[RMDB]
RNA sequence: GGGAACGACUCGAGUAGAGUCGAAAAUAUGUUGUAAAGAAUAGUACAGCUUUUCCAUUUGAAACACUUUCAGCAUGUCGUGCGUAUUUGGAUUCACGCACGACACAGCAGUUAACAAUCGAAGUCUCAUAAGAUCUGAGUUCGCUCAGAUCUUAUGAAAAGAAACAACAACAACAAC
Reactivity to 2A3 in 0.01 (KOAc 150mM, MgCl2 10mM, bicine 150mM(pH8.5), 24C), signal-to-noise 3, nucleotides 027 to 126: u140a040u050g000u010u000g030u020a070a100a100g100a270a200u060a130g100u030a010c020a010g000c000u070u000u020u000c000c010a030u130u030u210g060a050a070a000c040a000c030u070u160u130c030a020g020c010a020u010g010u000c000g000u000g000c010g010u040a090u080u100u150g190g060a110u170u100c070a000c000g000c000a000c000g010a000c010a000c000a000g000c000a010g020u050u100a060a040c020a090a020u080c040g040a060a000g100u040c000u000
Reactivity to DMS in 0.01 (KOAc 150mM, MgCl2 10mM, bicine 150mM(pH8.5), 24C), signal-to-noise 2, nucleotides 027 to 126: u020a050u000g000u000u000g000u000a020a060a130g020a130a180u010a090g020u000a010c020a020g000c020u000u000u010u000c000c000a190u030u000u000g010a100a030a130c300a070c110u010u000u000c060a090g030c010a300u000g000u000c000g030u010g000c010g000u000a090u000u020u030g020g010a160u000u000c200a010c020g000c000a000c010g020a030c000a000c080a060g020c010a000g010u000u000a040a050c090a020a160u000c060g020a030a100g000u010c150u000